[RMDB]
RNA sequence: GGGAACGACUCGAGUAGAGUCGAAAAGUGACGGGGGAGGAAAGUCCGGGCUCCAUAGGGCAGGGUGCCAGGUAACGCCUGGGGGGCGAGAGUCCACGGAAAGUGCCGCAGAAAAGAUACCGCCGACACAUGUAUGGUGGUUCGCCACCAUACAUGUAAAAGAAACAACAACAACAAC
Reactivity to DMS in 0.01 (KOAc 150mM, MgCl2 10mM, bicine 150mM(pH8.5), 24C), signal-to-noise 3, nucleotides 027 to 126: g030u020g000a080c030g010g010g000g000g000a120g010g010a090a090a090g000u000c030c020g020g000g000c020u000c030c090a110u030a090g020g000g000c100a100g000g000g020u010g000c020c040a010g010g010u010a100a110c200g020c030c010u020g000g000g000g000g010g010c070g000a040g000a160g010u020c020c040a110c080g010g000a040a050a080g000u010g000c010c020g000c070a020g000a060a040a100a060g000a120u030a050c040c020g030c000c040g000a110c120
Reactivity to 2A3 in 0.01 (KOAc 150mM, MgCl2 10mM, bicine 150mM(pH8.5), 24C), signal-to-noise 4, nucleotides 027 to 126: g070u050g030a050c020g010g010g000g000g030a040g010g070a140a040a010g060u030c030c000g020g000g000c020u010c010c030a080u150a110g030g040g020c050a050g060g020g000u050g030c000c000a010g020g030u030a070a040c070g060c040c000u010g000g010g000g000g000g020c030g010a060g020a010g040u020c000c000a030c050g010g000a050a070a030g050u060g050c020c020g000c030a010g120a040a090a010a000g060a020u050a040c000c020g010c020c010g040a010c010